[RMDB]
RNA sequence: GGGAACGACUCGAGUAGAGUCGAAAAGGUGAAGGAGGCGCCAAGCUCCCGCCCAUCUCCGAGCGUGAAAAGGCGUGGCGCCUUGCGGGGUACAGCGAUGCGAAGAUCCACAAGGCUCUGGCGUACCACAAGCGCAUGGAGGAGACGGUUGAUGCGCGACUGCCUUAGGAUUCGUCCUAAGGCAGUCAAAAGAAACAACAACAACAAC
Reactivity to 2A3 in 0.01 (KOAc 150mM, MgCl2 10mM, bicine 150mM(pH8.5), 24C), signal-to-noise 1, nucleotides 027 to 156: g080g000u040g030a030a050g020g020a000g020g020c000g020c000c080a000a020g040c010u030c050c000c000g000c000c000c000a060u030c020u020c030c010g080a000g020c040g000u140g040a120a080a030a000g030g010c020g010u060g000g050c020g010c020c010u000u020g020c100g000g010g010g000u060a020c020a040g060c060g170a040u130g040c030g010a170a000g060a110u010c000c020a000c010a000a030g010g000c000u040c030u070g160g000c000g010u050a250c020c030a010c050a050a030g010c000g030c050a040u110g000g020a040g030g010a120g020a020c020g010g020u040u020g080a060u120g000c010g040c040